[RMDB]
RNA sequence: GGGAACGACUCGAGUAGAGUCGAAAAGAUAUGGACUGUCAGAGGGAGCUCAGUCGGAAACGACGAGCGAGGAUCUCUGCAGUCCUAAGUCAAAACCAUGCUACGUUCUUCGGAACGUAGCAUGGAAGUACGUAUUGGGGUUCGCCCCAAUACGUACAAAAGAAACAACAACAACAAC
Reactivity to 2A3 in 0.01 (KOAc 150mM, MgCl2 10mM, bicine 150mM(pH8.5), 24C), signal-to-noise 2, nucleotides 027 to 126: g030a010u060a070u170g000g010a000c000u010g040u300c060a000g020a010g000g000g000a020g010c020u010c100a110g000u010c000g010g060a090a100a020c010g000a000c020g000a000g010c020g010a120g000g010a010u020c000u040c000u000g000c000a000g010u010c000c000u010a010a020g020u000c010a000a000a070a100c000c000a000u010g000c010u010a010c000g010u000u000c000u020u100c300g120g000a000a000c000g010u000a000g000c000a010u000g010g000a010a030
Reactivity to DMS in 0.01 (KOAc 150mM, MgCl2 10mM, bicine 150mM(pH8.5), 24C), signal-to-noise 2, nucleotides 027 to 126: g000a030u010a300u000g000g000a010c000u000g000u020c010a000g000a020g000g000g000a040g000c000u010c000a090g040u000c020g000g000a100a080a240c020g010a010c020g000a020g020c000g000a030g010g010a020u000c000u000c010u000g010c010a000g010u000c000c000u000a020a080g010u010c030a160a060a110a180c010c010a020u000g020c000u010a010c000g020u000u000c020u000u020c230g030g020a000a000c000g010u000a000g000c000a000u000g000g000a010a040
Structure probing data (2A3 and DMS) for a 177-nucleotide construct. For 2A3 the reverse transcriptase was SuperScript II with manganese. The reactions ran in a buffer of 150 mM KOAc, 10 mM MgCl2 and 150 mM bicine (pH 8.5), at 24 C.